[RMDB]
RNA sequence: GGGAACGACUCGAGUAGAGUCGAAAAAGUCCCAGUACUCGGCAAGCGUGAUGGGGCUUGCUUUCAGCGCUCUUCAGAUCUCUGAAAAGAGUCGGUGCAUUCAUUAAAGCUACGUAAUGCGACGAUCUAGCACUUUGAAAUUCGUUUCAAAGUGCUAAAAAGAAACAACAACAACAAC
Reactivity to DMS in 0.01 (KOAc 150mM, MgCl2 10mM, bicine 150mM(pH8.5), 24C), signal-to-noise 6, nucleotides 027 to 126: a140g000u000c000c000c000a140g010u010a060c070u000c110g000g030c040a050a040g010c030g020u020g010a090u000g020g020g020g000c010u000u000g000c040u000u010u000c060a050g020c070g000c040u000c030u010u000c120a110g010a110u020c130u010c010u000g000a060a060a090a060g010a060g020u010c020g010g010u010g000c030a030u000u000c070a110u030u030a070a100a160g010c120u020a060c150g010u030a020a030u000g010c000g000a080c040g000a050u020c100
Reactivity to 2A3 in 0.01 (KOAc 150mM, MgCl2 10mM, bicine 150mM(pH8.5), 24C), signal-to-noise 7, nucleotides 027 to 126: a000g030u010c010c000c000a000g050u080a060c050u040c070g040g010c060a070a040g030c020g030u080g060a110u070g040g010g030g000c000u010u010g010c000u020u050u050c040a020g000c000g010c030u010c000u090u020c020a030g010a180u050c100u000c000u130g050a030a060a040a030g050a010g010u010c010g020g040u040g000c000a020u020u040c010a010u040u260a140a100a040g090c070u080a040c090g100u150a050a010u060g010c010g020a020c020g000a030u030c020
Source: RMDB libraries RFM100 and RFMREP, as collected in RNAgym. Chemical mapping of a 177-nucleotide RNA with DMS and 2A3. For DMS the reverse transcriptase was MarathonRT. Values cover nucleotides 27 to 126.